Record summary:
The record gives the reactivity of an RNA of 177 nucleotides to 2A3 and DMS. 2A3 adducts were read by reverse transcription with SuperScript II with manganese. It was measured as part of the RMDB libraries RFM100 and RFMREP. The RNA was probed in 150 mM KOAc, 10 mM MgCl2 and 150 mM bicine (pH 8.5) at 24 C.
[RMDB]
RNA sequence: GGGAACGACUCGAGUAGAGUCGAAAAAGCUGACGUACGCGUCAGCAAUGGACCAGCGAGGGUGAUUUGCUGCGUUGACGUGGUGCUCUGCUUGGCUGUGUGUCGGAGCGCUACUACGGUAGCGCAACGGAAGAAGAACAUUCGUGUUCUUCUUCCGAAAAGAAACAACAACAACAAC
Reactivity to 2A3 in 0.01 (KOAc 150mM, MgCl2 10mM, bicine 150mM(pH8.5), 24C), signal-to-noise 9, nucleotides 027 to 126: a000g020c010u020g020a010c010g020u060a020c240g020c010g110u020c000a000g000c000a000a040u040g010g020a020c000c010a010g020c020g050a070g030g050g040u100g060a140u080u060u160g020c020u020g000c020g060u050u130g060a080c040g020u050g010g020u060g030c010u010c010u040g080c010u070u060g070g000c040u020g030u020g020u020g040u170c040g030g040a090g000c000g010c010u010a010c000u020a030c170g080g000u010a000g000c000g000c010a020a010
Reactivity to DMS in 0.01 (KOAc 150mM, MgCl2 10mM, bicine 150mM(pH8.5), 24C), signal-to-noise 8, nucleotides 027 to 126: a090g000c000u010g000a010c010g030u010a090c200g030c010g010u000c000a010g020c010a020a030u010g010g010a100c040c010a080g010c070g010a090g010g000g010u000g010a100u010u010u010g010c030u000g000c060g020u010u020g010a080c080g020u000g000g010u000g000c080u000c020u000g000c040u000u000g010g010c040u010g010u010g010u010g010u010c030g000g000a150g010c000g010c000u000a010c000u010a060c170g030g010u000a010g010c000g010c000a090a140